[RMDB]
RNA sequence: GGGAACGACUCGAGUAGAGUCGAAAAGGAGAGUAGAUGAUUCUCGUUAAGUGUGUGUGAGUGGGAUGUCGUCACACAACGAAGCGAGAGCGCGGUGAAUCAUGGCAUCAGCUCCAAAGAAAGAAAAGACCUAUGCUAUAUUCGUAUAGCAUAGGUCAAAAGAAACAACAACAACAAC
Reactivity to 2A3 in 0.01 (KOAc 150mM, MgCl2 10mM, bicine 150mM(pH8.5), 24C), signal-to-noise 7, nucleotides 027 to 126: g040g010a030g010a020g050u220a040g030a130u040g000a020u050u000c000u000c000g010u050u050a130a030g040u120g030u030g010u000g010u020g190a090g080u180g020g170g040a140u130g120u270c030g070u020c000a000c000a000c000a010a000c020g030a040a000g010c010g010a010g000a020g050c030g010c030g010g060u110g030a030a040u090c040a040u100g120g000c010a020u000c000a050g020c010u000c000c000a040a100a010g130a020a060a010g100a020a090a030a010
Reactivity to DMS in 0.01 (KOAc 150mM, MgCl2 10mM, bicine 150mM(pH8.5), 24C), signal-to-noise 4, nucleotides 027 to 126: g020g000a010g000a070g020u020a110g000a030u000g020a060u010u000c000u000c020g010u000u020a080a210g020u000g020u010g010u000g000u010g000a040g010u010g030g020g010a100u010g010u000c020g020u000c010a020c000a000c010a070a010c000g010a170a090g030c000g000a100g000a130g010c060g010c010g010g010u000g010a090a060u010c040a040u000g000g020c020a070u010c020a120g010c010u000c000c000a050a090a110g020a090a090a080g010a120a070a150a090